RNA sequence: GGGAACGACUCGAGUAGAGUCGAAAAUCCGCAGCAUUCGUGCUGCGGAACUUACCGAGCUUGUUGCUCGGUAUAACAACAAAACCCUUGGAAACAAGGGAAACAAUGAGCUAUUCGUAGCUCAUAAUAGGAUAUACGUAUUCGUACGUAUAUCCUAAAAAGAAACAACAACAACAAC
Reactivity to DMS in 0.01 (KOAc 150mM, MgCl2 10mM, bicine 150mM(pH8.5), 24C), signal-to-noise 7, nucleotides 027 to 126: u000c000c000g020c000a010g010c000a030u000u010c180g020u000g020c000u000g000c000g000g000a000a020c110u000u000a010c000c000g000a000g000c000u000u010g010u010u000g010c000u000c000g000g010u000a000u000a050a070c140a080a070c160a100a100a090a130c000c000c000u000u000g000g000a170a100a200c010a010a020g000g000g000a030a040a060c160a090a020u000g000a010g020c000u000a010u000u010c170g020u000a000g010c000u000c000a000u000a030a120
Reactivity to 2A3 in 0.01 (KOAc 150mM, MgCl2 10mM, bicine 150mM(pH8.5), 24C), signal-to-noise 8, nucleotides 027 to 126: u010c000c010g010c000a000g010c000a010u020u070c170g100u040g000c000u000g000c000g000g000a000a000c000u000u010a010c000c000g000a000g030c040u270u290g140u260u270g270c000u000c000g000g000u000a000u000a000a000c010a000a010c020a000a080a030a070c010c000c000u000u000g010g010a030a030a020c000a010a010g000g000g040a070a010a000c020a010a030u020g000a000g000c000u020a020u080u140c220g110u040a000g000c010u000c000a000u030a010a050